[RMDB]
RNA sequence: GGGAACGACUCGAGUAGAGUCGAAAAGAUAUGGAUGGACCAUGACUGUUUCCCGUAGGGAGUCGGGAUCGGAAACGAUCUGGCCGACAUCGAUCUACAGGGAAACAGUCAUGGUCCAUCCUAAGUCGAUAGUAUGUCGGUUCGCCGACAUACUAUCAAAAGAAACAACAACAACAAC
Reactivity to DMS in 0.01 (KOAc 150mM, MgCl2 10mM, bicine 150mM(pH8.5), 24C), signal-to-noise 2, nucleotides 027 to 126: g000a120u020a300u000g010g010a020u010g000g000a020c010c020a010u000g010a020c000u000g010u000u000u000c010c000c010g020u010a010g000g020g010a050g010u000c010g010g030g010a050u000c010g010g000a160a140a230c010g010a020u000c020u010g020g010c060c010g020a010c000a300u000c170g000a060u020c000u000a000c000a170g060g000g000a000a020a000c000a010g000u000c000a000u000g010g020u000c000c020a000u000c000c010u010a020a100g000u000c120